[RMDB]
RNA sequence: GGGAACGACUCGAGUAGAGUCGAAAAUGGAGCCAUAGUCUUGAACUCACCACUAUGAGAUAUUUUUGUAAAAUGGGUAAAGAACAGAAAUGUAAGCAGUGCGAAGGGCGCGGGUGUGCUUACAAUUCUGCUGCUGAAACAUUCCAUUGCUGGAAACGAUGUAAUGACAGUUCGCUGUCAUUACAUCAAAAGAAACAACAACAACAAC
Reactivity to 2A3 in 0.01 (KOAc 150mM, MgCl2 10mM, bicine 150mM(pH8.5), 24C), signal-to-noise 5, nucleotides 027 to 156: u070g030g040a010g040c010c010a070u060a030g050u040c030u080u130g050a110a090c020u030c050a040c040c030a040c040u100a050u080g060a070g070a070u100a180u090u130u040u080u090g130u100a100a100a030a020u060g010g010g020u060a080a090a040g020a040a020c010a010g020a020a030a010u030g000u010a000a000g000c020a030g070u040g160c030g060a100a090g100g050g010c050g000c030g040g100g030u170g010u010g000c000u000u010a000c000a000a070u010u000c000u000g010c040u020g010c000u010g050a090a080a030c030a040u040u040c020c010a020u040u120g040c060u030g040g030a040a040a020c050
Reactivity to DMS in 0.01 (KOAc 150mM, MgCl2 10mM, bicine 150mM(pH8.5), 24C), signal-to-noise 2, nucleotides 027 to 156: u010g020g000a090g010c070c010a050u000a060g000u010c020u000u000g000a120a100c120u000c050a120c070c010a060c100u000a060u000g010a130g000a210u000a030u000u010u000u010u010g000u000a070a030a140a110u000g020g010g010u000a090a140a060g000a070a050c030a060g010a000a050a050u000g000u000a010a040g000c010a040g050u020g010c100g010a080a090g000g010g000c060g000c030g010g000g000u010g020u000g030c010u000u000a020c030a030a090u000u000c020u010g020c000u000g040c050u010g020a160a080a090c050a130u000u000c030c000a100u000u010g010c040u010g020g000a090a060a090c160